[RMDB]
The record gives the reactivity of an RNA of 177 nucleotides to DMS and 2A3.
It was measured as part of the RMDB library M2PK50.
For 2A3, 6,282 sequencing reads were counted.
For 2A3 the reverse transcriptase was SuperScript II with manganese.
Values cover nucleotides 27 to 126.
RNA sequence: GGGAACGACUCGAGUAGAGUCGAAAAUAGCUGACGUUCGCGUCAGCUAAAAGCACCAAAACCUCCUCGCGGUGCGGCGCCGGCCCCGCCGGGAAGGCCGCCAACUCGAUGGGUUCGCCCAUCGAAAGUCAAUAUCAAGGUUCGCCUUGAUAUUGACAAAAGAAACAACAACAACAAC
Reactivity to DMS in 0.01 (KOAc 150mM, MgCl2 10mM, bicine 150mM(pH8.5), 24C), signal-to-noise 4, nucleotides 027 to 126: u000a010g010c000u010g000a010c000g010u000u010c230g020c010g020u000c010a000g010c000u010a010a020a070a110g010c150a140c020c020a060a060a150a240c050c020u000c010c020u000c060g010c080g010g020u000g010c020g020g020c010g000c040c020g000g000c030c080c090c120g020c050c040g000g000g010a080a070g020g010c020c020g010c030c100a070a050c180u000c000g000a010u000g000g010g010u000u020c190g010c000c000c000a010u010c000g000a010a020a090
Reactivity to 2A3 in 0.01 (KOAc 150mM, MgCl2 10mM, bicine 150mM(pH8.5), 24C), signal-to-noise 3, nucleotides 027 to 126: u040a010g000c000u000g000a000c020g040u040u040c300g020c010g110u010c000a010g010c000u000a000a000a000a000g010c020a070c060c000a000a030a100a180c010c020u030c010c010u030c010g030c030g000g030u090g020c010g010g020c050g010c000c020g020g000c030c080c070c140g030c030c000g000g000g020a060a030g180g000c020c000g000c000c010a040a050c030u020c000g010a010u000g000g000g040u030u030c200g050c010c000c000a010u010c000g010a020a010a010